[RMDB]
Structure probing data (DMS and 2A3) for a 177-nucleotide construct. The 2A3 profile rests on 1,377 reads. For DMS the reverse transcriptase was MarathonRT. The reactions ran in a buffer of 150 mM KOAc, 10 mM MgCl2 and 150 mM bicine (pH 8.5), at 24 C.
RNA sequence: GGGAACGACUCGAGUAGAGUCGAAAAUGUCUGCUCUGGUGGAGCGUGCCGAUCUGGAUCCAGGCGUGCAUGUCAUUCUGGUGUCCGGUCGCGGCGAGGGAUUCUGUGCCGGCUUCGACCUGUCCGCAGUUUGCUACCAUUUCGAUGGUAGCAAACUAAAAGAAACAACAACAACAAC
Reactivity to DMS in 0.01 (KOAc 150mM, MgCl2 10mM, bicine 150mM(pH8.5), 24C), signal-to-noise 2, nucleotides 027 to 126: u000g020u010c020u000g020c020u010c030u000g010g020u000g000g010a050g000c050g020u010g030c130c040g020a070u000c030u010g050g000a060u000c020c010a020g000g000c210g020u010g000c040a120u000g010u000c020a040u010u000c010u000g010g030u010g000u000c010c030g010g020u000c070g010c050g030g000c010g020a100g000g010g000a110u000u000c050u000g030u000g010c000c040g020g000c060u010u000c070g010a070c030c010u010g000u000c030c030g020c120
Reactivity to 2A3 in 0.01 (KOAc 150mM, MgCl2 10mM, bicine 150mM(pH8.5), 24C), signal-to-noise 2, nucleotides 027 to 126: u140g000u000c010u030g020c020u010c030u060g070g060u070g090g000a050g000c060g020u050g020c030c030g020a080u070c020u130g030g000a010u020c050c000a020g030g020c040g050u000g040c050a150u200g100u180c020a030u040u040c010u020g100g000u110g040u050c000c000g030g000u030c030g030c020g050g000c010g020a100g090g000g030a090u200u100c010u070g090u110g010c020c030g020g000c010u070u100c030g110a020c010c050u050g020u050c020c030g030c000